[RMDB]
RNA sequence: GGGAACGACUCGAGUAGAGUCGAAAAGCUCGGUGACCCAUUGUAUGGGUGGGUCCGACCGACCUCUUGUCGCAAAUCUACAAGACAUUGGUUAACCUGUACGAUGGUUGAGCCCUCGCUUCGCGGGUCAAGGUACGCUCUUCGGGGCGUGCCUUGAAAAAGAAACAACAACAACAAC
Reactivity to DMS in 0.01 (KOAc 150mM, MgCl2 10mM, bicine 150mM(pH8.5), 24C), signal-to-noise 9, nucleotides 027 to 126: g000c040u010c300g010g020u010g000a110c180c000c000a010u000u010g010u010a040u000g000g010g020u000g000g010g010u020c080c150g000a070c060c030g000a020c100c300u000c010u000u000g020u000c080g000c190a100a090a140u070c110u010a040c060a020a020g010a030c110a110u020u000g000g000u010u020a090a060c000c000u010g010u010a030c020g000a010u010g000g010u010u000g010a270g000c010c000c020u010c050g000c030u020u010c080g000c060g000g000g000
Reactivity to 2A3 in 0.01 (KOAc 150mM, MgCl2 10mM, bicine 150mM(pH8.5), 24C), signal-to-noise 5, nucleotides 027 to 126: g040c030u020c030g020g060u090g040a080c000c000c010a000u010u040g040u030a040u040g020g010g010u040g030g030g040u050c040c060g080a070c010c020g020a030c000c010u010c000u010u050g010u010c020g020c100a060a080a180u110c060u070a060c020a050a040g020a010c020a080u040u120g040g000u040u080a030a010c000c000u010g020u030a010c020g020a020u020g040g000u030u090g060a020g000c010c010c000u020c000g010c020u140u110c120g000c020g040g000g000